Structure probing data (2A3) for a 207-nucleotide construct.
[RMDB]
RNA sequence: GGGAACGACUCGAGUAGAGUCGAAAAGGAACAACUGAAGCUUCAACGCCUUUUUUUCCAAUCUUCUUUAGCACCGGGCUAGGGAGUAAGCCCGUGGAACCUUAGUUUUGUUCCCUCGGGACUUACUUGUGGUUCCUGUGGUGCACUCCUGACCCUGACUUGUCCUAUGGUUCGCCAUAGGACAAGUAAAAGAAACAACAACAACAAC
Reactivity to 2A3 in 0.01 (KOAc 150mM, MgCl2 10mM, bicine 150mM(pH8.5), 24C), signal-to-noise 3, nucleotides 027 to 156: g020g000a050a030c030a030a040c080u140g070a200a000g080c040u210u140c100a120a050c070g050c040c010u060u020u020u010u020u040u050c060c000a100a170u070c080u190u030c020u110u180u090a080g060c090a040c070c040g020g010g010c040u070a050g070g010g020a000g010u090a080a020g010c000c000c020g010u030g000g000a000a000c010c000u010u010a030g020u070u110u080u250g070u150u040c000c020c020u080c100g040g000g010a010c000u010u000a010c000u030u060g100u120g080g010u000u030c020c010u030g120u200g020g020u080g020c010a010c010u020c000c010u050g040a090c010c000c010u010g040